[RMDB]
RNA sequence: GGGAACGACUCGAGUAGAGUCGAAAAAGACCCGCACCUACAGCUUCUCCCAGAUCACGCGGGCGAUCCGGCUGAUCGAGGGCGGCGCGCGGUUCGUGGCGACCAACCCCGACCCGGUCGGGCCUUCGCCGGAGGGGUCGCUGCCGGCGUGCGGCGCGAGACAUACUAGGUUCGCCUAGUAUGUCUCAAAAGAAACAACAACAACAAC
Reactivity to 2A3 in 0.01 (KOAc 150mM, MgCl2 10mM, bicine 150mM(pH8.5), 24C), signal-to-noise 2, nucleotides 027 to 156: a020g100a060c010c010c000g000c010a020c000c020u060a020c000a040g040c030u040u010c070u120c030c040c030a090g010a300u180c090a130c140g300c040g070g050g000c010g010a000u060c040c030g030g000c030u060g020a070u010c020g010a270g000g040g000c000g020g010c050g000c000g000c010g110g060u110u230c070g070u150g150g070c020g040a070c010c000a040a200c000c000c000c000g020a020c010c090c040g000g000u000c020g030g030g070c000c050u100u090c020g010c050c030g010g040a060g000g010g010g010u010c020g000c010u030g050c100c100g100g000c110g010u020g030c000g030g000c010g020c050

Chemical mapping of a 207-nucleotide RNA with 2A3. The 2A3 profile rests on 1,103 reads. It was measured as part of the RMDB library OK3TST. For 2A3 the reverse transcriptase was SuperScript II with manganese.